An RNA of 177 nucleotides, treated with DMS and 2A3 and read out base by base. For 2A3, 7,501 sequencing reads were counted. 2A3 adducts were read by reverse transcription with SuperScript II with manganese. For DMS the reverse transcriptase was MarathonRT. As a SHAPE reagent, 2A3 marks flexible, mostly unpaired nucleotides at the ribose 2'-OH.
RNA sequence: GGGAACGACUCGAGUAGAGUCGAAAAGGACUUAGGUUCGCCUAAGUCCAAAUAACGUCUACAAGUACGGUAGACGAAGAUAACGUACAGUAGAGAAGUACAAAAGGAGAGACUUCGGUCUCUCCAACACGUAGAAGAGGUUCGCCUCUUCUACGUGAAAAGAAACAACAACAACAAC
Reactivity to DMS in 0.01 (KOAc 150mM, MgCl2 10mM, bicine 150mM(pH8.5), 24C), signal-to-noise 3, nucleotides 027 to 126: g020g000a010c000u000u000a010g010g010u000u010c250g040c000c000u000a000a010g000u000c000c000a010a020a050u010a070a100c040g010u000c000u000a000c000a040a090g020u010a020c080g000g010u000a010g010a060c020g010a090a060g000a120u010a050a070c080g000u010a020c070a080g010u020a090g000a120g010a140a080g010u000a030c070a100a060a120a100g010g000a010g000a020g010a010c000u000u010c190g020g000u000c020u000c000u000c000c000a030a020
Reactivity to 2A3 in 0.01 (KOAc 150mM, MgCl2 10mM, bicine 150mM(pH8.5), 24C), signal-to-noise 5, nucleotides 027 to 126: g000g000a010c000u010u010a000g020g030u040u050c150g090c030c010u000a000a000g000u000c000c000a000a000a000u010a000a010c010g020u010c000u000a000c010a110a130g140u050a050c070g060g000u010a020g010a020c030g000a030a010g040a040u160a080a040c080g030u050a020c070a070g070u190a040g060a020g010a300a030g010u030a020c040a030a120a030a030g010g000a010g000a000g000a000c000u020u030c170g040g000u000c010u020c000u000c000c000a000a000